[RMDB]
RNA sequence: GGGAACGACUCGAGUAGAGUCGAAAAGAUAUGGAGUUGUCUUGAUUGCCUAUGAAGUCGGAAACGAUGGAGGCAACAAGAGCAACUCCUAAGUCAAAAGUUAGUCUGACUUCGGUCAGACUAACAACAGCGAAUGUCAGUUCGCUGACAUUCGCUGAAAAGAAACAACAACAACAAC
Reactivity to DMS in 0.01 (KOAc 150mM, MgCl2 10mM, bicine 150mM(pH8.5), 24C), signal-to-noise 2, nucleotides 027 to 126: g000a000u000a300u000g000g000a030g010u010u000g010u010c070u000u000g020a140u010u020g000c000c000u000a300u000g000a100a140g000u010c010g000g000a130a140a200c000g020a010u010g000g000a000g020g000c000a000a010c010a000a000g010a080g010c020a010a000c000u000c000c000u000a010a050g010u000c050a100a070a130a110g000u000u000a000g000u000c020u010g000a040c000u020u010c120g010g000u000c010a020g010a000c000u000a000a000c000a060a140
Reactivity to 2A3 in 0.01 (KOAc 150mM, MgCl2 10mM, bicine 150mM(pH8.5), 24C), signal-to-noise 2, nucleotides 027 to 126: g010a050u070a040u210g000g000a030g000u030u000g030u040c000u040u210g170a300u300u020g040c010c000u300a300u300g010a050a000g020u000c010g010g020a060a000a060c000g000a000u030g090g000a000g000g020c010a000a000c000a000a000g030a080g010c020a000a000c000u000c000c010u000a030a010g050u000c020a040a040a090a040g010u000u000a000g000u000c000u000g000a010c020u120u050c300g020g000u000c000a000g020a000c000u000a000a000c000a000a010
This 177-nucleotide RNA was probed chemically with DMS and 2A3. For 2A3, 3,035 sequencing reads were counted. 2A3 adducts were read by reverse transcription with SuperScript II with manganese. Source: RMDB library TTRDEL, as collected in RNAgym.